[RMDB]
Chemical mapping of a 207-nucleotide RNA with 2A3.
RNA sequence: GGGAACGACUCGAGUAGAGUCGAAAAACUGUUUUGUAUUUGCUUUUCUGAAAGAAGAAGCCUGUGGUUAAGGUUUACUUCAUGUUAGAAACUUGUUUUAACUAUGGUUAAGCCAAAUCUAACUAAGUGGUUUUUAUCUUCUUAAUUUUACAAGUGAUGAUUAUGGUAGGUUCGCCUACCAUAAUCAAAAAGAAACAACAACAACAAC
Reactivity to 2A3 in 0.01 (KOAc 150mM, MgCl2 10mM, bicine 150mM(pH8.5), 24C), signal-to-noise 1, nucleotides 027 to 156: a000c020u020g010u000u070u060u210g040u050a150u020u050u010g010c000u150u060u010u080c000u050g070a170a080a060g020a000a000g040a000a000g000c000c010u070g040u100g020g120u060u030a010a030g010g010u010u000u050a170c000u000u010c030a060u040g000u000u000a030g040a080a030a040c050u240u270g080u000u120u000u020a020a000c000u020a020u160g030g030u000u010a010a010g000c040c010a050a080a020u030c010u070a010a010c000u020a020a020g060u020g050g030u040u090u080u040u040a140u040c010u090u010c000u010u070a110a230u090u110u230u300a120c050a130a070g250u070g090a210
Notes: The reactions ran in a buffer of 150 mM KOAc, 10 mM MgCl2 and 150 mM bicine (pH 8.5), at 24 C.